The data come from the RNA Mapping Database (RMDB), library OK1LIB. Chemical mapping of a 177-nucleotide RNA with DMS and 2A3.

RNA sequence: GGGAACGACUCGAGUAGAGUCGAAAACAGGAAAGAACGUGGUCAACGUCCAGACAAAACCGAGCUUGUUCAAAGUGAGGAAUGGGGGAGAAAUCGGGGCUGUCGCUCUUGACUAUCCGAGUGGCACCAUCGACGUCGAUUUCGAUCGACGUCGAUGAAAAGAAACAACAACAACAAC
Reactivity to DMS in 0.01 (KOAc 150mM, MgCl2 10mM, bicine 150mM(pH8.5), 24C), signal-to-noise 1, nucleotides 027 to 126: c070a120g030g010a000a030a120g010a050a050c010g050u000g000g010u050c010a120a090c110g040u010c030c100a050g010a050c060a080a080a080a050c020c030g000a250g000c000u000u000g040u150u050c190a120a030a010g000u020g010a230g050g040a020a030u000g010g000g030g000g050a120g000a060a080a070u000c060g000g000g000g000c150u020g000u000c030g000c110u050c060u000u030g000a160c070u030a190u030c010c030g030a000g000u000g000g000c060a080c150
Reactivity to 2A3 in 0.01 (KOAc 150mM, MgCl2 10mM, bicine 150mM(pH8.5), 24C), signal-to-noise 2, nucleotides 027 to 126: c000a010g100g120a000a210a000g040a080a000c000g030u040g010g000u070c090a030a010c040g050u020c030c020a040g060a010c040a000a110a000a000c000c000g000a010g010c000u090u040g070u220u160c010a170a010a000g110u070g020a020g070g000a090a000u070g000g000g000g020g000a150g140a060a080a000u100c000g040g000g000g040c110u070g040u050c020g010c020u010c000u060u050g060a070c020u070a110u100c040c050g010a030g010u030g020g000c010a000c030